[RMDB]
RNA sequence: GGGAACGACUCGAGUAGAGUCGAAAAUGUGAUGCUGUAGCUCCCCAUGAUUUCUUCAUCUUUGAUGUAGACAAAGUUAAAACACCUCAUAUUGUACGUCAGCGUUUAACUGAGUACACUAUGAUGGAAACGAUUGAGUUCGCUCAAUCGAAAAGAAACAACAACAACAAC
Reactivity to DMS in 0.01 (KOAc 150mM, MgCl2 10mM, bicine 150mM(pH8.5), 24C), signal-to-noise 9, nucleotides 027 to 129: u020g010u010g000a050u040g010c010u030g000u010a100g000c040u010c020c000c020c060a090u050g010a150u030u020u020c020u000u030c050a050u010c040u020u020u030g020a020u020g020u020a060g020a040c280a050a080a060g000u020u020a050a070a090a090c230a110c000c000u010c000a030u020a020u000u000g000u020a020c000g060u020c030a030g000c030g050u050u040u050a100a190c020u000g000a090g000u000a020c010a020c040u020a000u000g000a020u040g030g000a060a050a130
Reactivity to 2A3 in 0.01 (KOAc 150mM, MgCl2 10mM, bicine 150mM(pH8.5), 24C), signal-to-noise 9, nucleotides 027 to 129: u180g020u040g060a060u130g030c050u060g050u070a020g020c010u030c000c020c010c000a060u100g080a170u120u090u030c010u060u030c000a070u000c030u050u110u290g040a060u060g030u070a010g010a020c080a060a090a060g050u120u130a090a120a040a020c070a050c020c000u000c000a000u000a010u000u000g000u010a010c040g300u020c010a010g010c050g090u090u150u120a070a030c010u000g000a000g010u000a000c000a000c000u000a000u000g020a030u190g010g010a040a050a010